Conditions: 150 mM KOAc, 10 mM MgCl2 and 150 mM bicine (pH 8.5), 24 C.
This 207-nucleotide RNA was probed chemically with 2A3 and DMS.
Values cover nucleotides 27 to 156.
For 2A3, 1,190 sequencing reads were counted.
Source: RMDB library OK3TST, as collected in RNAgym.
RNA sequence: GGGAACGACUCGAGUAGAGUCGAAAAUGUGGGAAUUGUCGCAAACUCGCUUAUUAGAACGUAGCCAAGCUCGCGGCGCUUAUAUUGAUCAAGGCGAAUCUCACAAUGUAUUUAUUGAAGCACCUACGGCCGCAAAAUAUCGCACUAUUAUGCGUAAUGGCAAUUAGUAAUUCGUUACUAAUUGCCAAAAAGAAACAACAACAACAAC
Reactivity to 2A3 in 0.01 (KOAc 150mM, MgCl2 10mM, bicine 150mM(pH8.5), 24C), signal-to-noise 3, nucleotides 027 to 156: u080g000u000g000g010g010a090a080u170u100g150u080c000g000c020a000a040a080c040u020c040g000c050u080u040a010u050u060a160g050a160a020c070g010u000a020g040c020c050a120a030g030c080u100c080g060c020g000g010c060g030c040u070u060a050u010a020u150u220g030a040u070c050a060a000g080g000c000g010a000a040u000c000u010c010a020c000a040a020u070g060u050a110u110u160u040a170u040u140g060a070a000g050c040a060c030c010u090a040c050g040g030c020c020g000c050a040a040a000a040u150a030u160c030g000c020a010c110u090a090u250u060a050u110g000c010g030u040a040a070
Reactivity to DMS in 0.01 (KOAc 150mM, MgCl2 10mM, bicine 150mM(pH8.5), 24C), signal-to-noise 2, nucleotides 027 to 156: u000g030u010g020g010g020a080a130u000u000g040u000c000g020c000a090a130a070c030u000c040g000c020u020u030a130u010u010a170g000a040a060c050g010u000a090g000c030c080a090a100g040c050u000c060g040c060g020g070c020g030c050u000u010a060u000a130u030u000g010a130u010c110a100a080g030g050c040g030a030a090u020c020u010c000a040c010a050a100u010g020u010a090u000u000u000a110u040u000g010a070a080g010c070a100c030c010u000a090c060g010g080c020c020g070c020a070a070a050a090u010a130u010c010g010c010a050c040u010a070u020u000a140u010g010c000g020u000a130a230